[RMDB]
Conditions: 150 mM KOAc, 10 mM MgCl2 and 150 mM bicine (pH 8.5), 24 C. This 177-nucleotide RNA was probed chemically with DMS and 2A3.
RNA sequence: GGGAACGACUCGAGUAGAGUCGAAAAGAUAUGGAACUAGUCCGCCGAAGAACUUCUUCGGAAACGAAGAAGGGAGGAACUACGGAGUUAGUUCCUAAGUCAAAAUCUCAAGGUUCGCCUUGAGAAAGAUAUAUAAUCUCUUCGGAGAUUAUAUAUCAAAAGAAACAACAACAACAAC
Reactivity to DMS in 0.01 (KOAc 150mM, MgCl2 10mM, bicine 150mM(pH8.5), 24C), signal-to-noise 3, nucleotides 027 to 126: g010a020u010a140u000g000g000a020a010c010u010a030g000u010c010c000g000c050c050g000a080a090g010a300a250c000u000u000c000u000u000c000g020g000a020a020a070c000g010a000a010g000a020a000g000g010g000a110g000g010a100a070c110u020a130c010g000g000a040g000u000u000a010g000u000u000c000c000u000a010a050g000u000c010a100a090a090a150u000c010u000c000a000a000g000g010u000u000c260g030c000c000u000u000g000a010g000a010a050a080
Reactivity to 2A3 in 0.01 (KOAc 150mM, MgCl2 10mM, bicine 150mM(pH8.5), 24C), signal-to-noise 3, nucleotides 027 to 126: g010a010u030a010u070g000g010a000a020c010u010a020g090u040c040c050g000c080c090g300a300a100g000a040a030c000u000u010c000u000u000c010g000g000a010a010a000c000g000a000a000g000a010a010g020g010g040a050g030g080a210a190c210u190a040c230g010g020a040g170u070u010a000g000u000u000c000c000u000a020a000g000u000c010a050a040a070a300u020c010u010c020a010a000g030g020u070u120c270g020c060c000u000u000g000a000g000a010a010a000
The 2A3 profile rests on 5,991 reads.